Chemical mapping of a 207-nucleotide RNA with DMS and 2A3. 2A3 adducts were read by reverse transcription with SuperScript II with manganese.
[RMDB]
RNA sequence: GGGAACGACUCGAGUAGAGUCGAAAACCUGUUUAUAUGGCAGUUAUACGCUCAACAUCGGUUGAGCGUAUAACAUAAGGAUUCAACGUGGAGCGUUGAAUGCGUCUGUAAAACGCAAGUGUUAACUUGCGUUUUACAGAUCCUUAUACAGGCCACGCGAUGCUAGUAAGUUCGCUUACUAGCAUCGAAAAGAAACAACAACAACAAC
Reactivity to DMS in 0.01 (KOAc 150mM, MgCl2 10mM, bicine 150mM(pH8.5), 24C), signal-to-noise 1, nucleotides 027 to 156: c010c000u000g010u000u000u010a080u010a090u030g000g060c010a170g010u000u000a000u010a000c010g080c000u000c000a010a010c010a300u010c230g090g030u010u000g010a010g000c000g020u000a000u000a000a000c000a040u000a010a050g010g010a140u000u010c000a010a020c010g020u010g030g000a260g030c040g010u000u000g000a020a010u010g010c130g010u020c000u000g020u000a020a010a020a010c010g010c020a050a030g010u000g030u000u030a110a110c040u010u000g010c000g010u000u000u010u010a000c000a020g010a010u000c000c010u000u010a070u000a130c050a090g000g020c010c020a030c060g000
Reactivity to 2A3 in 0.01 (KOAc 150mM, MgCl2 10mM, bicine 150mM(pH8.5), 24C), signal-to-noise 4, nucleotides 027 to 156: c010c000u010g050u050u130u020a250u060a060u120g010g000c010a010g000u010u000a010u000a000c000g030c000u010c010a020a030c040a220u300c260g180g010u010u010g000a000g000c000g010u000a000u000a000a000c000a000u000a000a000g000g010a000u000u010c010a010a000c010g030u140g210g180a170g180c010g000u020u010g010a020a000u040g050c050g020u010c000u010g000u000a000a000a000a000c000g000c000a000a000g000u020g090u300u280a090a060c000u000u000g000c000g010u000u000u010u000a000c000a000g000a000u000c010c000u000u000a010u010a030c070a050g220g000c000c000a000c000g050
It was measured as part of the RMDB library OK3TST.